RNA sequence: GGGAACGACUCGAGUAGAGUCGAAAAAGACUGAUUAACGAAUUAAAUUCAGCUUGAUAUUAAACGAUUUAAUCUGAUUUCAGUUCAAUAAUGCCACAGUAGAGGACGUAGAUUAAUACGUCCUCAAGAAUUUCUGAUUUUUCGAAAUCAGGAAUUCAAAAGAAACAACAACAACAAC
Reactivity to 2A3 in 0.01 (KOAc 150mM, MgCl2 10mM, bicine 150mM(pH8.5), 24C), signal-to-noise 6, nucleotides 027 to 126: a000g020a010c000u000g000a010u050u040a050a020c030g010a040a060u000u000a020a000a010u130u070c010a040g020c050u090u090g080a050u060a090u170u300a090a080a000c020g000a000u000u020u010a000a000u000c010u020g040a110u000u030u010c000a000g010u060u020c020a040a060u170a130a050u130g130c020c010a120c030a070g110u170a040g010a000g000g000a000c000g000u010a000g010a130u040u140a060a050u010a010c000g000u000c000c000u000c000a000a000
Reactivity to DMS in 0.01 (KOAc 150mM, MgCl2 10mM, bicine 150mM(pH8.5), 24C), signal-to-noise 4, nucleotides 027 to 126: a110g000a010c000u000g010a010u010u020a060a260c160g010a040a020u020u000a000a000a000u010u020c070a090g020c160u010u010g010a170u010a120u020u060a030a010a090c050g000a020u000u000u020a010a010u000c020u000g010a220u000u000u000c010a020g010u010u000c050a050a110u020a040a050u030g010c020c030a060c170a080g000u020a090g010a000g000g010a000c000g030u000a000g000a180u020u050a100a070u000a000c020g010u000c000c000u000c000a000a060
Source information:
Chemical mapping of a 177-nucleotide RNA with 2A3 and DMS. For 2A3, 12,382 sequencing reads were counted.